[RMDB]
RNA sequence: GGGAACGACUCGAGUAGAGUCGAAAAAUCCUCAGGUUCAUAAGGGUGAUGAUUGGGUGUUCAUGCUCCAUGCAUGACAUGUGCCUCCUUUGAACCUUGUUACGACCUUGGCACAUUACCCAUCUGAAAAAGACGUUCGCGUUCGCGCGAACGUCAACCGUAGGAUAGGGUUCGCCCUAUCCUACGGAAAAGAAACAACAACAACAAC
Reactivity to 2A3 in 0.01 (KOAc 150mM, MgCl2 10mM, bicine 150mM(pH8.5), 24C), signal-to-noise 1, nucleotides 027 to 156: a000u020c000c020u060c000a010g000g000u000u000c000a000u120a270a030g000g010g000u040g020a150u060g030a030u150u180g000g010g000u010g050u130u010c000a000u010g000c030u030c150c110a140u180g000c000a000u000g000a020c020a020u020g010u000g000c000c000u010c000c010u000u000u020g070a000a000c000c000u000u020g020u050u080a060c060g060a090c050c050u040u070g000g000c000a000c000a040u010u100a010c020c000c000a020u000c010u030g030a060a010a000a000a010g020a000c000g000u000u000c020g000c010g040u000u050c190g000c030g000c000g110a030a000c000g000u000c000a000a000